[RMDB]
RNA sequence: GGGAACGACUCGAGUAGAGUCGAAAAAUCUUUUUUAGUAGCAGUAAGCCUGGGAAUGGGGGCGACCCAGGCGUAUGAACAUAGUCCAUCGUCACUCAUCACCCCGAGUGGCAGUGUGUGACGCUCACGAUCAUUACCUGUUCGCGGGUAGUGGUCGAAAAGAAACAACAACAACAAC
Reactivity to 2A3 in 0.01 (KOAc 150mM, MgCl2 10mM, bicine 150mM(pH8.5), 24C), signal-to-noise 9, nucleotides 027 to 126: a000u080c060u070u070u030u030u070u120a110g050u140a020g070c070a020g030u120a110a020g010c000c000u000g010g000g020a070a110u150g080g010g000g020g000c020g040a050c000c010c000a000g000g000c000g010u020a010u020g040a050a020c050a120u120a050g020u010c010c000a020u030c030g020u010c000a000c000u000c010a070u090c040a150c020c000c010c020g000a010g000u030g020g030c090a090g010u050g010u010g070u150g140a020c050g010c040u020c010a050
Reactivity to DMS in 0.01 (KOAc 150mM, MgCl2 10mM, bicine 150mM(pH8.5), 24C), signal-to-noise 9, nucleotides 027 to 126: a050u020c010u010u010u020u010u020u030a090g010u030a050g020c050a300g000u000a050a090g000c000c000u000g010g000g010a090a070u020g010g000g000g000g010c020g010a130c010c000c000a000g010g000c010g010u010a010u010g000a080a090c170a070u020a080g000u010c030c000a040u010c070g020u010c010a020c000u000c000a080u020c120a110c080c060c050c120g010a010g000u000g000g000c010a040g020u020g000u010g020u040g010a030c020g000c060u000c050a190
Source information:
Structure probing data (2A3 and DMS) for a 177-nucleotide construct. Source: RMDB library OK1LIB, as collected in RNAgym.